[RMDB]
RNA sequence: GGGAACGACUCGAGUAGAGUCGAAAAGAUAUGGAGUGCCCAUGGGAGCUAUCGUAUCGGAAACGAUACGUUAGCAUCGAUCAUGGGUCACUCCUAAGUCAAACCAGGUUGCUUCGGCAACCUGGAAGGUAGUUCUUAGGUUCGCCUAAGAACUACCAAAAGAAACAACAACAACAAC
Reactivity to 2A3 in 0.01 (KOAc 150mM, MgCl2 10mM, bicine 150mM(pH8.5), 24C), signal-to-noise 2, nucleotides 027 to 126: g020a010u030a020u120g000g010a000g000u000g010c000c000c000a000u020g010g000g070a230g000c000u000a010u030c000g000u000a010u000c000g040g000a070a020a040c000g000a000u010a000c010g000u020u010a000g000c010a050u270c060g040a130u040c000a010u000g010g000g020u030c010a000c000u000c000c000u000a010a000g000u000c020a030a020a080c000c000a010g010g000u000u010g000c010u090u180c300g200g000c000a000a000c010c000u000g000g010a000a020
Reactivity to DMS in 0.01 (KOAc 150mM, MgCl2 10mM, bicine 150mM(pH8.5), 24C), signal-to-noise 3, nucleotides 027 to 126: g000a040u010a300u010g010g000a010g020u000g030c020c000c000a040u000g030g020g000a080g000c000u000a010u000c000g010u000a010u010c000g030g010a100a070a210c020g000a010u000a000c010g000u000u000a000g000c010a200u000c210g030a080u010c010a000u010g000g010g010u030c020a000c000u000c000c000u000a010a050g000u000c020a110a170a170c010c000a030g020g000u000u000g010c000u010u010c220g030g000c000a010a000c000c000u000g000g020a010a050
An RNA of 177 nucleotides, treated with 2A3 and DMS and read out base by base.
For DMS, 2,724 sequencing reads were counted.
DMS adducts were read by reverse transcription with MarathonRT.
As a SHAPE reagent, 2A3 marks flexible, mostly unpaired nucleotides at the ribose 2'-OH.
In probing experiments dimethyl sulfate is read out at A N1 and C N3, which are open when not base-paired.
2A3 adducts were read by reverse transcription with SuperScript II with manganese.
The data come from the RNA Mapping Database (RMDB), library TTRDES.